[RMDB]
RNA sequence: GGGAACGACUCGAGUAGAGUCGAAAACAAGUGCAACAACAAUGCUACUGUUGCCAAAACCCAACAGUCAGCGUCUGUACCAGCUGCCCAGUCGCCUAUCCACUAUGCUGCUACUGCGCCUGUGAACACUAUAACCAGACGCACCACAAAGUCACACAAAGACUAGAUGAUUCGUCAUCUAGUCUUUAAAAGAAACAACAACAACAAC
Reactivity to DMS in 0.01 (KOAc 150mM, MgCl2 10mM, bicine 150mM(pH8.5), 24C), signal-to-noise 3, nucleotides 027 to 156: c040a090a150g010u000g020c030a110a120c060a090a140c080a060a070u010g030c120u000a080c060u010g020u000u000g030c010c030a110a090a110a200c060c080c010a080a050c040a040g000u000c080a050g010c020g030u010c050u000g000u000a110c070c040a160g010c040u010g000c010c050c000a130g010u010c070g040c030c030u010a120u010c050c050a100c030u000a120u000g030c030u000g030c020u010a090c090u000g020c020g040c000c010u000g020u000g010a080a130c040a120c060u010a130u010a150a160c150c000a040g010a060c000g020c000a060c020c010a090c070a070a080a130g000u000c010a060c090a120c210
Reactivity to 2A3 in 0.01 (KOAc 150mM, MgCl2 10mM, bicine 150mM(pH8.5), 24C), signal-to-noise 5, nucleotides 027 to 156: c030a010a120g050u060g110c030a040a040c010a020a040c020a060a170u150g020c030u070a030c030u020g000u000u000g000c010c010a020a020a040a100c040c020c000a030a040c040a050g100u130c050a020g010c010g030u020c030u040g050u040a060c020c010a030g020c070u080g010c010c050c010a020g030u020c030g030c010c010u070a070u100c070c000a060c080u050a110u210g030c050u050g000c010u070a020c020u030g000c030g020c020c000u060g010u070g100a080a010c060a030c070u140a110u100a250a030c020c010a010g020a020c030g040c010a030c040c000a060c050a080a160a030g070u150c010a030c000a000c030